[RMDB]
Chemical mapping of a 207-nucleotide RNA with 2A3.
2A3 adducts were read by reverse transcription with SuperScript II with manganese.
RNA sequence: GGGAACGACUCGAGUAGAGUCGAAAAUUGAGGCGGCUUAGCGGAUUAGGGCGUUCUGCCCCAGUGGUACCAUUACCCUAUGCAAAGUCUGCAUGCAGGCAGGGUAGUGUGCUGCUCGGGCACAACUGGUCGAGAGCUGGGCCGCUCUCCUGAUGAACGGAAUCAUUCAGUUCGCUGAAUGAUUCCGAAAAGAAACAACAACAACAAC
Reactivity to 2A3 in 0.01 (KOAc 150mM, MgCl2 10mM, bicine 150mM(pH8.5), 24C), signal-to-noise 2, nucleotides 027 to 156: u120u120g020a000g060g000c010g000g000c000u000u020a010g020c060g190g080a140u030u150a130g080g010g090c060g020u000u020c020u020g000c000c000c000c000a010g010u010g000g000u010a010c100c010a030u010u010a010c000c020c020u030a050u120g090c100a200a000a000g100u100c070u050g060c050a040u150g010c000a010g010g080c010a010g000g000g000u000a000g000u000g000u000g030c000u000g000c000u000c000g000g000g000c000a000c000a000a050c020u090g180g110u030c020g050a040g000a010g300c010u000g000g010g000c000c000g000c000u000c000u000c000c000u170g060a120u140g030a090a010